[RMDB]
RNA sequence: GGGAACGACUCGAGUAGAGUCGAAAAACUGCCGUAUUCGUACGGCAGUGACAAGCUUCUAUGGCCAAGUUGGUAAGGCGCCACACUAGUAAUGUGGAGAUCGUCGGUUCAAAUCCGACUGGAAGCACCACGAGAGAACGCCGUUCGCGGCGUUCAACUCACAUUAAGCAUUCGUGCUUAAUGUGAGAAAAGAAACAACAACAACAAC
Reactivity to 2A3 in 0.01 (KOAc 150mM, MgCl2 10mM, bicine 150mM(pH8.5), 24C), signal-to-noise 4, nucleotides 027 to 156: a000c000u000g000c010c000g010u010a020u020u090c280g030u060a000c000g010g000c010a010g010u000g000a010c010a000a070g010c010u010u000c000u010a010u010g010g010c010c000a030a010g050u160u150g260g140u170a050a010g010g010c010g000c000c000a000c000a000c010u080a040g070u280a180a100u040g000u010g020g000a010g000a020u160c010g000u000c000g000g000u010u010c000a010a000a000u020c010c010g000a000c000u000g000g000a000a000g020c000a010c000c010a040c040g170a120g000a010g000a050a000c000g000c010c000g020u080u070c220g000c010g120g000c000g000u000u010c000a000a010
Reactivity to DMS in 0.01 (KOAc 150mM, MgCl2 10mM, bicine 150mM(pH8.5), 24C), signal-to-noise 2, nucleotides 027 to 156: a020c020u000g000c000c030g030u000a020u010u000c230g040u020a000c000g040g000c000a010g020u000g000a030c060a130a130g040c020u000u020c040u000a010u000g080g000c040c020a100a270g030u000u000g000g030u000a050a300g020g010c000g020c000c010a000c000a010c010u010a300g000u000a060a030u000g000u020g000g010a040g010a030u000c010g000u000c010g060g040u000u000c200a040a300a100u000c030c000g000a020c000u000g040g020a020a050g000c010a180c020c020a050c020g020a230g000a090g010a040a030c000g050c000c010g000u000u000c280g040c050g040g030c000g010u010u020c010a020a070